RNA sequence: GGGAACGACUCGAGUAGAGUCGAAAACUUCGACGAGGGAUGCACUGCAGCAGGGGGAUGUGCUGCCUGGAAAUGACGUCUGCGGCUUCCUUUUCGCUGAUCGCAUUUUCGGGGGCACCAAUACGACACUGACUAUGGGCUUCGGCCCAUAGUCAGUAAAAGAAACAACAACAACAAC
Reactivity to 2A3 in 0.01 (KOAc 150mM, MgCl2 10mM, bicine 150mM(pH8.5), 24C), signal-to-noise 1, nucleotides 027 to 126: c030u070u060c060g100a030c060g030a110g000g040g000a020u070g010c040a060c120u090g000c050a040g000c020a020g130g000g000g000g010a030u040g020u020g000c010u100g300c000c000u000g000g000a000a110a000u020g230a060c000g000u010c000u030g000c000g000g000c050u210u300c050c010u150u000u020u030c000g000c010u000g020a060u140c090g000c030a000u000u000u000u000c010g000g000g000g020g030c000a000c000c000a050a030u150a060c000g040a030c030